[RMDB]
RNA sequence: GGGAACGACUCGAGUAGAGUCGAAAAGAAACGAAGGUUGGCUAACCCUGGUCGGACAUCAGGAGGUUAGUGCAUUCGCAUAAGCCAUCUUGACAACAAAAAGGAAAAAGAAAGAAGAAAAAGAAAACGCAUUUACGGUGUUCGCACCGUAAAUGCGAAAAGAAACAACAACAACAAC
Reactivity to 2A3 in 0.01 (KOAc 150mM, MgCl2 10mM, bicine 150mM(pH8.5), 24C), signal-to-noise 1, nucleotides 027 to 126: g000a050a000a000c000g000a000a000g000g110u110u100g100g000c000u000a050a050c010c000c010u000g000g000u010c120g020g170a000c050a020u020c000a000g080g000a000g020g160u080u140a010g000u000g000c000a050u220u210c060g000c080a020u000a000a100g000c000c000a020u000c000u060u050g000a000c070a190a000c060a000a220a000a240a040g100g000a140a000a000a000a000g250a000a070a140g180a060a040g000a000a050a020a060a000g110a070a010a000a000